[RMDB]
RNA sequence: GGGAACGACUCGAGUAGAGUCGAAAAGAUUGAAAUUUUAGGUGCUGGAAUGGUACAUCCUAAUGUAUUAGAAAUGGCUGGUUUUGAUUCUUCAGAGUACUCUGGAUUUGCAUUUGGUAUGGGACCAGCAGUACACUAGAUUCGUCUAGUGUACUGCAAAAGAAACAACAACAACAAC
Reactivity to 2A3 in 0.01 (KOAc 150mM, MgCl2 10mM, bicine 150mM(pH8.5), 24C), signal-to-noise 2, nucleotides 027 to 126: g040a040u110u070g030a020a110a110u030u110u090u110a020g030g030u050g020c020u060g060g140a180a120u070g020g010u020a020c050a050u060c000c000u080a080a120u050g040u090a100u020u150a030g090a000a100a040u060g050g020c030u010g070g090u030u000u030u120g040a040u140u010c020u060u010c020a000g010a060g090u030a070c010u060c020u030g010g060a110u020u020u150g000c020a000u030u000u120g010g000u100a080u080g040g030g030a020c020c000a000
Reactivity to DMS in 0.01 (KOAc 150mM, MgCl2 10mM, bicine 150mM(pH8.5), 24C), signal-to-noise 2, nucleotides 027 to 126: g000a080u000u010g000a080a070a100u000u010u000u000a120g010g020u000g010c030u000g010g010a100a110u010g000g010u000a040c040a050u010c100c040u000a070a050u000g010u000a030u000u000a120g010a070a080a080u000g010g030c030u000g010g000u010u000u000u000g010a090u010u010c050u000u000c030a080g020a090g000u000a020c220u000c030u000g010g000a070u000u020u000g000c030a030u000u010u010g000g020u010a060u000g000g000g000a090c040c040a060

This 177-nucleotide RNA was probed chemically with 2A3 and DMS. It was measured as part of the RMDB library OK2TST.